RNA sequence: GGGAACGACUCGAGUAGAGUCGAAAAAUCAAGGUGUAAAAAGUGUGCACAAAACACCCACCACCCCUGUGGUGGGUGGUGCAUUCGCCUAUAUUCUGCGGAAUUUCGCCUGGCGUAUGGAUGAAGAGACUAGGAUAAGGUUCGCCUUAUCCUAGUCAAAAGAAACAACAACAACAAC
Reactivity to DMS in 0.01 (KOAc 150mM, MgCl2 10mM, bicine 150mM(pH8.5), 24C), signal-to-noise 3, nucleotides 027 to 126: a080u010c080a050a050g000g020u000g000u020a030a070a070a090a110g020u020g010u000g000c020a020c010a110a070a120a300c010a010c010c000c000a000c000c000a020c020c200c190c300u020g010u000g030g020u010g010g010g020u000g000g000u000g010c000a040u000u000c000g010c040c040u000a070u000a060u000u000c040u010g020c100g010g010a070a090u000u000u000c080g020c030c060u000g000g010c030g000u000a060u020g010g000a050u000g000a160a080g000a180
Reactivity to 2A3 in 0.01 (KOAc 150mM, MgCl2 10mM, bicine 150mM(pH8.5), 24C), signal-to-noise 2, nucleotides 027 to 126: a000u140c050a060a040g000g000u020g000u170a080a090a060a040a070g030u110g000u040g070c080a030c030a010a300a180a060c010a030c000c000c000a000c000c000a010c020c140c000c160u250g010u010g030g010u020g000g010g000u000g010g000u000g000c000a000u040u000c030g000c000c020u080a070u000a010u160u000c030u030g000c010g120g010a060a110u060u080u050c090g000c040c010u020g030g000c010g010u060a060u240g070g020a040u070g050a090a050g080a000

The record gives the reactivity of an RNA of 177 nucleotides to DMS and 2A3. The data come from the RNA Mapping Database (RMDB), library RFMREP. The DMS profile rests on 2,141 reads. Reactivities are rounded to 0.1 and cut off at 0 and 3. Values cover nucleotides 27 to 126.